[RMDB]
RNA sequence: GGGAACGACUCGAGUAGAGUCGAAAAACGGAUGGUACGCCAUCCGACCAUUGGGUAGAAGCGUACAAUCAGCACCGUGACGGUGCAGAUGGGAAAUUGCCCAUGAUACGCACCAUACGUGGUGCGAAAAAGCCAUCGGUGUUCGCACCGAUGGCAAGGUAGCGUGAAAGUUCGCUUUCACGCUACCAAAAGAAACAACAACAACAAC
Reactivity to 2A3 in 0.01 (KOAc 150mM, MgCl2 10mM, bicine 150mM(pH8.5), 24C), signal-to-noise 1, nucleotides 027 to 156: a010c000g010g000a000u000g020g000u000a000c050g000c000c000a000u020c000c000g000a000c010c000a030u020u110g070g000g010u030a020g000a070a010g000c040g010u000a000c010a000a040u060c030a000g000c000a000c030c000g100u200g300a160c280g060g000u000g000c000a010g000a050u040g000g080g000a030a090a030u010u040g020c000c010c000a000u030g100a080u030a020c020g000c000a010c000c000a010u000a050c300g140u070g000g000u000g000c000g000a010a000a000a030a000g000c010c000a000u000c020g000g000u060g040u100u050c220g000c080a000c000c000g000a000u000g010g000c000a000a000